[RMDB]
RNA sequence: GGGAACGACUCGAGUAGAGUCGAAAACGCCGAGGCCACGCUCGAACGAUCGGCCGCAGCUUCGAGGAGCGCCGACAUUACCGAGCCGAUGUCGCCGGUCAGCGGUGCCACGAUCGGCCGGUUGCUGCGUAUAACGUGACUUCGGUCACGUUAUACGAAAAGAAACAACAACAACAAC
Reactivity to DMS in 0.01 (KOAc 150mM, MgCl2 10mM, bicine 150mM(pH8.5), 24C), signal-to-noise 5, nucleotides 027 to 126: c110g020c080c030g000a060g020g000c020c030a070c070g000c040u010c040g020a050a100c080g020a080u000c030g000g000c040c040g000c240a100g010c090u010u010c050g020a090g020g020a160g010c070g010c050c010g010a040c110a090u000u000a050c010c010g000a100g030c010c020g010a050u010g000u000c040g010c030c000g010g010u010c190a100g000c010g010g010u010g000c080c090a110c070g010a040u000c010g000g000c000c010g000g010u000u000g010c110u000g000
Reactivity to 2A3 in 0.01 (KOAc 150mM, MgCl2 10mM, bicine 150mM(pH8.5), 24C), signal-to-noise 4, nucleotides 027 to 126: c040g020c010c010g040a040g030g020c060c040a040c040g090c030u050c040g060a090a050c060g080a120u040c010g030g010c030c010g020c020a020g030c040u070u090c020g080a100g030g050a070g020c050g010c010c010g060a040c010a100u110u090a020c000c020g030a060g020c000c020g050a040u120g060u120c020g000c010c010g020g060u300c050a040g200c020g000g020u020g040c030c030a030c050g080a030u020c000g000g000c000c010g000g010u000u060g010c020u050g040